Source: RMDB library M2RFOK, as collected in RNAgym. Structure probing data (2A3 and DMS) for a 207-nucleotide construct. For DMS, 1,696 sequencing reads were counted. Reactivities are given for positions 27 through 156. 2A3 adducts were read by reverse transcription with SuperScript II with manganese. The RNA was probed in 150 mM KOAc, 10 mM MgCl2 and 150 mM bicine (pH 8.5) at 24 C.

[RMDB]
RNA sequence: GGGAACGACUCGAGUAGAGUCGAAAACUCUUGCACAGAAUCACCUUUCUAUAAUAACCAGUGCAAGAAGGGUUAUUAUACCAUUUAAUGUGCCGAGGCCACGCGGAGUCCGAUCGAGGGUACAGCAAAAACGUGAAGUACUUCGGUACUUCACGAACAGGCAUUUUAAGUUCGCUUAAAAUGCCUGAAAAGAAACAACAACAACAAC
Reactivity to 2A3 in 0.01 (KOAc 150mM, MgCl2 10mM, bicine 150mM(pH8.5), 24C), signal-to-noise 4, nucleotides 027 to 156: c000u000c000u000u020g000c000a010c010a020g100a120a120u110c020a150c050c030u130u300u180c150u120a020u000a020a000u000a000a000c010c010a010g000u000g020c010a000a000g000a000a020g000g000g000u000u000a010u000u010a010u020a040c020c010a140u130u210u200a210a120u210g050u090g040c000c010g020a030g050g010c000c010a020c010g050c020g020g060a140g120u100c070c040g100a250u070c010g020a090g030g010g000u010a000c010a010g010c000a000a030a030a030a000c000g000u010g000a000a000g000u010a000c000u020u040c140g040g000u000a000c000u010u000c050a000c000g000a010a020
Reactivity to DMS in 0.01 (KOAc 150mM, MgCl2 10mM, bicine 150mM(pH8.5), 24C), signal-to-noise 2, nucleotides 027 to 156: c020u000c000u000u000g030c020a060c010a170g020a140a160u000c100a130c010c080u000u000u000c060u000a070u000a060a020u000a020a040c040c000a300g020u000g000c040a090a110g000a030a150g000g030g070u020u020a060u000u000a030u000a090c180c070a070u020u000u000a110a110u000g030u000g000c020c030g000a130g000g000c010c020a130c070g050c070g010g010a130g020u000c080c110g000a030u000c080g000a100g020g010g020u010a080c010a060g030c100a010a040a100a090a080c000g100u000g000a010a020g000u000a000c000u000u010c300g140g020u010a000c000u000u000c020a000c000g000a050a100